[RMDB]
RNA sequence: GGGAACGACUCGAGUAGAGUCGAAAAGGAGGCAAGUUCGCUUGCCUCCAAAGAAGCUCAAAUUGACGCAAACAUCCGCGUCAUCGCGAGCAAGCGAGGUAAAAACCGUGAACUUCGGUUCACGGAAGAACAAAUAUCAGUUCGCUGAUAUUUGUUCAAAAGAAACAACAACAACAAC
Reactivity to 2A3 in 0.01 (KOAc 150mM, MgCl2 10mM, bicine 150mM(pH8.5), 24C), signal-to-noise 4, nucleotides 027 to 126: g000g000a000g010g000c020a000a020g030u040u060c060g020c070u000u010g000c000c010u000c000c000a010a000a000g010a020a010g000c010u000c000a010a080a220u090u040g000a000c000g020c010a050a300a240c100a300u130c150c100g000c000g000u000c000a010u010c010g000c030g030a000g000c000a000a010g060c030g060a060g050g110u220a110a070a010a040a040c000c000g000u000g000a010a000c000u040u050c210g090g000u010u000c000a000c000g000g000a010a000
Reactivity to DMS in 0.01 (KOAc 150mM, MgCl2 10mM, bicine 150mM(pH8.5), 24C), signal-to-noise 8, nucleotides 027 to 126: g010g010a020g010g010c000a000a020g020u000u010c170g030c010u000u000g010c000c000u000c000c010a010a030a080g000a080a080g020c000u000c000a050a300a050u000u000g000a010c000g010c010a110a100a180c250a090u010c230c170g010c000g000u010c000a000u000c140g010c300g000a020g020c010a090a080g000c100g000a060g020g010u010a050a060a060a090a080c000c010g010u000g010a000a010c000u000u010c160g020g000u000u000c000a010c000g000g000a010a020

Overview
The record gives the reactivity of an RNA of 177 nucleotides to 2A3 and DMS. Values cover nucleotides 27 to 126. Source: RMDB library M2PK50, as collected in RNAgym.